[RMDB]
RNA sequence: GGGAACGACUCGAGUAGAGUCGAAAACAGAGCUAAUGAGCCACAUACCUACCCAAGGUGAAAGCUCCUUCUCUCGCAAUGUGGAACUCAUGAUUCUCAUGACCCCUGGUUGGAGAGAUCCGGACUAUAGACUAGAGGGUGUUCGCACCCUCUAGAACAAACAGAUUGUGUUCGCACAAUCUGUUUGAAAAGAAACAACAACAACAAC
Reactivity to 2A3 in 0.01 (KOAc 150mM, MgCl2 10mM, bicine 150mM(pH8.5), 24C), signal-to-noise 5, nucleotides 027 to 156: c060a020g070a010g050c030u120a150a140u240g110a100g030c060c030a040c030a080u250a050c020c000u030a040c010c000c010a030a020g000g000u060g050a090a060a000g020c030u020c000c030u080u000c020u010c000u000c000g090c140a010a090u080g070u210g040g040a110a030c030u010c020a000u010g040a130u290u070c160u070c110a020u020g010a040c000c010c000c060u060g120g010u080u050g040g000a010g000a000g000a030u030c070c060g000g010a010c050u070a060u110a300g140a070c000u000a000g000a000g000g010g010u010g010u040u070c130g020c030a000c000c000c000u010c000u000a000g000a000a000
Reactivity to DMS in 0.01 (KOAc 150mM, MgCl2 10mM, bicine 150mM(pH8.5), 24C), signal-to-noise 3, nucleotides 027 to 156: c070a120g000a100g040c040u000a100a110u000g010a110g040c000c010a080c060a130u000a060c020c020u000a110c050c010c080a170a070g000g000u000g000a100a090a140g000c040u000c020c030u000u000c030u010c020u000c040g000c050a070a050u020g000u000g000g020a090a110c060u000c010a040u000g010a190u010u010c130u000c020a100u000g020a090c040c000c020c020u010g000g040u010u010g000g010a080g020a070g010a040u000c040c030g020g030a070c070u000a120u010a150g000a210c000u000a020g000a040g000g020g020u000g020u010u000c280g030c010a030c010c000c010u000c000u000a010g010a080a160

An RNA of 207 nucleotides, treated with 2A3 and DMS and read out base by base. The RNA was probed in 150 mM KOAc, 10 mM MgCl2 and 150 mM bicine (pH 8.5) at 24 C. For 2A3, 3,362 sequencing reads were counted. Values cover nucleotides 27 to 156. For 2A3 the reverse transcriptase was SuperScript II with manganese.